The record gives the reactivity of an RNA of 177 nucleotides to DMS and 2A3. The 2A3 profile rests on 996 reads. The reactions ran in a buffer of 150 mM KOAc, 10 mM MgCl2 and 150 mM bicine (pH 8.5), at 24 C.
[RMDB]
RNA sequence: GGGAACGACUCGAGUAGAGUCGAAAAGACAACACUCCAACUUCUGUGAAUCUGAGUUUUUGCCACUUUUGACUAUAAAGAGUGUUGCAUGUCACUACCAUGUUAAAGAUUUGCUGACAUCUGAGGGAAGUAUCUCCACGUUCGCGUGGAGAUACUUAAAAGAAACAACAACAACAAC
Reactivity to DMS in 0.01 (KOAc 150mM, MgCl2 10mM, bicine 150mM(pH8.5), 24C), signal-to-noise 2, nucleotides 027 to 126: g030a150c030a020a030c050a050c020u030c020c080a120a120c090u010u000c080u010g020u000g010a090a090u000c040u010g030a060g000u000u000u020u000u020g010c030c040a050c030u000u000u010u000g020a130c080u000a100u000a060a060a080g010a000g010u010g000u010u010g000c010a040u010g010u020c090a030c050u000a100c100c070a070u000g020u000u000a060a090a110g010a040u010u000u000g010c100u000g000a030c100a060u000c080u010g010a080g010g000g000
Reactivity to 2A3 in 0.01 (KOAc 150mM, MgCl2 10mM, bicine 150mM(pH8.5), 24C), signal-to-noise 1, nucleotides 027 to 126: g040a020c040a000a000c010a030c020u000c040c000a180a110c100u130u000c010u080g050u040g080a040a050u040c010u050g050a020g170u040u000u000u100u110g020c000c010a010c000u050u050u040u120g090a090c050u070a060u140a240a100a030g000a000g000u020g000u010u030g010c010a030u070g040u040c030a010c020u030a080c020c020a070u150g030u100u180a080a090a030g020a080u020u000u070g040c060u030g000a040c020a030u000c020u020g040a130g060g030g000